[RMDB]
RNA sequence: GGGAACGACUCGAGUAGAGUCGAAAACUACCAUAGGAUACACGUUGUCGGUGAGCAGGUCGACGCGAAUCUCGUGGGUCUAACCAGCCUCUAUAAUAUUGAUGUUAACGUGCAAACCAUCGAUGUCCAGGGUAAGAGGAUUCGUCCUCUUACCCUGAAAAGAAACAACAACAACAAC
Reactivity to DMS in 0.01 (KOAc 150mM, MgCl2 10mM, bicine 150mM(pH8.5), 24C), signal-to-noise 4, nucleotides 027 to 126: c080u010a150c010c020a030u000a110g000g000a050u000a090c160a100c040g010u010u010g020u000c020g040g020u000g010a120g020c070a070g000g000u000c020g010a050c040g000c060g010a080a050u010c030u020c050g050u000g000g010g010u010c060u000a050a100c080c050a120g000c030c030u000c090u010a060u000a060a050u000a090u000u010g000a050u000g000u010u000a040a070c120g000u010g010c070a040a070a080c160c030a020u000c030g020a060u000g010u010c150
Reactivity to 2A3 in 0.01 (KOAc 150mM, MgCl2 10mM, bicine 150mM(pH8.5), 24C), signal-to-noise 3, nucleotides 027 to 126: c040u060a040c010c020a070u090a100g050g010a020u050a070c060a000c070g090u100u230g030u070c030g000g020u070g050a060g080c060a040g130g000u040c010g000a010c010g000c010g040a020a040u060c050u030c080g010u090g040g000g000u020c030u040a050a020c030c020a010g060c030c000u050c040u070a110u040a290a140u100a040u090u090g040a070u030g050u100u060a100a030c090g050u060g060c070a060a050a000c030c010a010u070c030g050a020u080g030u000c010